Chemical mapping of a 177-nucleotide RNA with 2A3 and DMS. 2A3 is a SHAPE reagent: it acylates the 2'-hydroxyl of flexible nucleotides of all four kinds.
[RMDB]
RNA sequence: GGGAACGACUCGAGUAGAGUCGAAAAGUGUGUGAGAGACACAGAGAGUCUGUGUGAGUCUCUCUGAGAGACUCUGUCAGACUGAGUCACUCUCAGAGACAGAGACUGACUCUGACAGUCUCUCAGAUACAUUUGGCAUGUUCGCAUGCCAAAUGUAAAAAGAAACAACAACAACAAC
Reactivity to 2A3 in 0.01 (KOAc 150mM, MgCl2 10mM, bicine 150mM(pH8.5), 24C), signal-to-noise 1, nucleotides 027 to 126: g150u100g010u030g020u030g080a010g000a000g000a010c000a030c000a170g060a000g010a010g040u040c010u010g160u010g040u060g170a060g120u040c020u000c000u000c010u080g010a040g000a010g010a050c020u000c010u030g110u150c130a050g060a190c030u030g000a000g000u020c040a010c080u010c000u000c010a020g000a010g000a010c020a020g120a010g010a030c000u030g030a030c010u000c030u010g050a060c050a030g000u000c000u000c000u000c010a000g000a020
Reactivity to DMS in 0.01 (KOAc 150mM, MgCl2 10mM, bicine 150mM(pH8.5), 24C), signal-to-noise 4, nucleotides 027 to 126: g010u010g010u000g010u000g000a020g000a050g020a040c010a120c090a150g010a090g000a070g000u000c000u010g020u010g020u000g030a300g000u010c010u000c000u020c110u000g010a050g000a060g000a030c000u000c010u000g010u000c170a120g010a220c140u000g010a020g010u000c030a100c060u020c010u000c060a030g010a070g000a040c080a050g000a210g000a030c020u000g000a050c000u000c000u010g000a100c180a050g010u000c000u000c000u010c020a020g000a120